[RMDB]
RNA sequence: GGGAACGACUCGAGUAGAGUCGAAAACGAUCAUCAACGCAGCAAUGGCGUAAGACGUAUUGAUUUUUCAGACAGUUAGCGGGCUGCGGGUUGCAGUCCUUACCGGUAGAUAGGAUCUUCUCUGGAGCCUAGUCAACUAGUUCGCUAGUUGACUAGGAAAAGAAACAACAACAACAAC
Reactivity to DMS in 0.01 (KOAc 150mM, MgCl2 10mM, bicine 150mM(pH8.5), 24C), signal-to-noise 5, nucleotides 027 to 126: c090g000a090u000c030a040u010c130a130a050c030g010c030a130g000c160a120a110u010g000g000c020g020u000a120a090g010a070c010g000u000a060u000u000g000a030u000u010u000u020u000c090a100g000a080c100a060g000u000u000a060g020c150g000g000g020c000u000g000c010g000g000g020u010u010g010c010a010g000u000c000c010u000u000a010c060c050g030g010u000a080g000a070u010a060g020g020a190u000c020u000u000c030u000c020u010g020g010a150g010
Reactivity to 2A3 in 0.01 (KOAc 150mM, MgCl2 10mM, bicine 150mM(pH8.5), 24C), signal-to-noise 4, nucleotides 027 to 126: c010g020a130u020c000a000u050c030a010a030c020g000c000a020g030c020a060a300u220g290g000c020g000u010a010a010g030a020c020g020u010a090u010u040g040a050u020u040u000u080u100c050a050g040a120c000a020g060u040u080a070g070c080g000g000g000c020u020g020c060g010g100g030u140u260g000c010a000g000u040c000c000u010u020a020c010c010g040g040u050a040g010a110u050a080g020g060a040u030c000u060u010c040u020c050u060g110g010a050g000

Structure probing data (DMS and 2A3) for a 177-nucleotide construct. For DMS the reverse transcriptase was MarathonRT. The reactions ran in a buffer of 150 mM KOAc, 10 mM MgCl2 and 150 mM bicine (pH 8.5), at 24 C. For 2A3, 4,484 sequencing reads were counted.